RNA sequence: GGGAACGACUCGAGUAGAGUCGAAAACAUGACCUGCUCUUUGAGGUAAAUUAUUUGCUAGAUUGGCUCAUUGGACUCCUGGAAGUGCUUUGCUUAUGCUUACCCAUUUGUUAAAAGGAAACAGAUGAACAGCCAGAUGAAAGAGAUGCACAGAACACACCCUUCAAUCAUUCGUGAUUGAAGGGUGAAAAGAAACAACAACAACAAC
Reactivity to 2A3 in 0.01 (KOAc 150mM, MgCl2 10mM, bicine 150mM(pH8.5), 24C), signal-to-noise 3, nucleotides 027 to 156: c030a050u110g120a070c000c030u010g040c000u030c020u060u080u110g060a030g020g040u080a060a110a060u170u080a150u080u110u120g010c040u030a030g040a200u030u070g050g010c020u010c080a040u010u110g040g000a020c040u050c030c010u040g020g040a050a020g030u020g050c030u040u050u070g010c000u050u070a040u120g030c020u020u060a070c000c040c010a020u010u040u040g070u020u060a200a230a030a000g060g010a080a020a000c000a000g030a030u030g040a040a030c020a010g040c020c010a030g010a060u040g020a040a020a040g050a030g000a010u060g000c020a030c010a060g090a130a000c050a030
Reactivity to DMS in 0.01 (KOAc 150mM, MgCl2 10mM, bicine 150mM(pH8.5), 24C), signal-to-noise 2, nucleotides 027 to 156: c070a160u030g010a150c010c020u000g030c000u000c050u000u020u030g020a110g020g020u000a110a100a030u000u000a120u000u010u010g030c020u000a100g000a100u000u000g030g030c000u000c040a080u020u010g020g020a070c020u000c020c040u000g000g000a080a160g030u000g000c010u000u000u000g030c030u000u010a070u000g000c060u000u010a180c070c050c020a150u000u010u020g030u000u010a060a090a080a150g010g000a150a040a070c020a030g010a060u010g010a050a100c070a100g010c010c070a180g030a130u020g000a060a070a110g000a160g020a050u010g000c090a090c040a090g000a070a120c100a160
Chemical mapping of a 207-nucleotide RNA with 2A3 and DMS. For DMS, 2,484 sequencing reads were counted. Conditions: 150 mM KOAc, 10 mM MgCl2 and 150 mM bicine (pH 8.5), 24 C. Reactivities are given for positions 27 through 156.